RNA sequence: GGGAACGACUCGAGUAGAGUCGAAAAAUGCCGGAGGGGCAGCUGCCGCGCACCGGCGCGGUGAUCGGCAGCAACGCAGCGCACAUCGCCGUCGCGGUGGACGAGGACGCGCAGACGUUCGUGGCGACUCCUGGUAUUGAUUCGUCAAUACCAGGAGAAAAGAAACAACAACAACAAC
Reactivity to 2A3 in 0.01 (KOAc 150mM, MgCl2 10mM, bicine 150mM(pH8.5), 24C), signal-to-noise 3, nucleotides 027 to 126: a000u070g030c020c000g030g070a060g050g060g000g000c020a020g010c000u000g020c000c010g000c010g000c030a010c000c030g300g090c130g020c150g110g000u000g000a050u050c000g010g000c020a020g010c020a030a010c050g000c040a020g000c020g000c010a010c000a060u020c030g000c040c020g130u100c100g020c030g040g060u080g030g010a040c020g020a050g010g050a020c030g040c010g000c040a050g030a070c020g010u010u050c030g020u080g020g000c020g060a070
Reactivity to DMS in 0.01 (KOAc 150mM, MgCl2 10mM, bicine 150mM(pH8.5), 24C), signal-to-noise 5, nucleotides 027 to 126: a100u000g010c020c010g010g020a110g010g000g010g030c100a070g020c030u000g000c000c000g010c090g000c010a040c030c020g020g020c140g010c070g010g020u000g010a020u010c030g000g000c000a030g010c040a060a070c130g000c070a120g020c030g000c190a070c070a070u000c020g020c020c140g010u010c050g010c030g020g020u000g000g000a070c050g000a080g000g010a060c050g010c050g010c070a070g010a110c040g010u000u000c030g010u000g010g010c030g010a230